Chemical mapping of a 177-nucleotide RNA with DMS. Conditions: 150 mM KOAc, 10 mM MgCl2 and 150 mM bicine (pH 8.5), 24 C. The data come from the RNA Mapping Database (RMDB), library OK2TST. The DMS profile rests on 939 reads. For DMS the reverse transcriptase was MarathonRT.
[RMDB]
RNA sequence: GGGAACGACUCGAGUAGAGUCGAAAAGUGAUGAGCAAAGAUGAUGCAAGUCUUCAGUUGCCCCCGACUGCCUUGGUUCGUAAGAAAAUAUUUUCAGUGUUUUUAUGGGCAAACAAGUUCUAAGGAACUAUCGCCACUUUUUCGAAAGUGGCGAUAGAAAAGAAACAACAACAACAAC
Reactivity to DMS in 0.01 (KOAc 150mM, MgCl2 10mM, bicine 150mM(pH8.5), 24C), signal-to-noise 1, nucleotides 027 to 126: g010u000g010a010u000g020a240g000c020a020a110a070g020a120u010g010a100u010g020c180a080a160g000u000c020u000u000c050a060g000u010u000g010c040c010c000c100c040g000a050c090u000g000c090c020u000u020g010g000u000u000c050g000u000a040a110g000a010a020a040a070u020a070u000u010u010u020c210a140g020u010g010u000u000u010u000u000a110u010g030g010g000c070a050a040a140c160a080a130g000u010u000c010u000a080a070g060g010a050a110